[RMDB]
RNA sequence: GGGAACGACUCGAGUAGAGUCGAAAAUCAAAUCGUACAGGUAAGAUCGUGCCUGCUGUAGCUUUCGCGGCUCACUCGACGCGGCGGCAAUCCAGCCUUGAAUGAGCUCCGAAUGCACUCGCCACGAUGCACUAAUUACUUUCGAGUAAUUAGUGCAAAAAGAAACAACAACAACAAC
Reactivity to DMS in 0.01 (KOAc 150mM, MgCl2 10mM, bicine 150mM(pH8.5), 24C), signal-to-noise 9, nucleotides 027 to 126: u010c050a080a110a070u010c110g020u000a120c120a070g010g010u010a060a120g010a080u000c050g010u000g000c040c020u000g020c100u000g010u000a080g010c040u000u000u000c020g030c300g000g000c010u000c010a020c040u000c010g010a040c230g010c070g010g030c120g000g020c200a080a100u010c070c030a140g020c010c080u000u000g010a020a030u000g000a030g010c010u000c300c020g010a030a020u000g010c010a070c060u000c070g000c110c030a040c070g010a090
Reactivity to 2A3 in 0.01 (KOAc 150mM, MgCl2 10mM, bicine 150mM(pH8.5), 24C), signal-to-noise 5, nucleotides 027 to 126: u080c010a030a030a060u120c070g080u110a050c050a110g100g040u120a160a030g040a160u040c030g030u050g000c010c040u040g020c040u050g050u080a040g000c010u010u030u030c030g000c030g010g000c000u000c010a010c010u010c020g060a050c030g020c020g070g000c010g060g020c060a010a050u070c020c010a050g010c000c000u030u060g020a050a030u020g000a010g000c000u000c020c010g010a030a010u030g000c010a030c020u050c040g040c050c010a030c030g000a030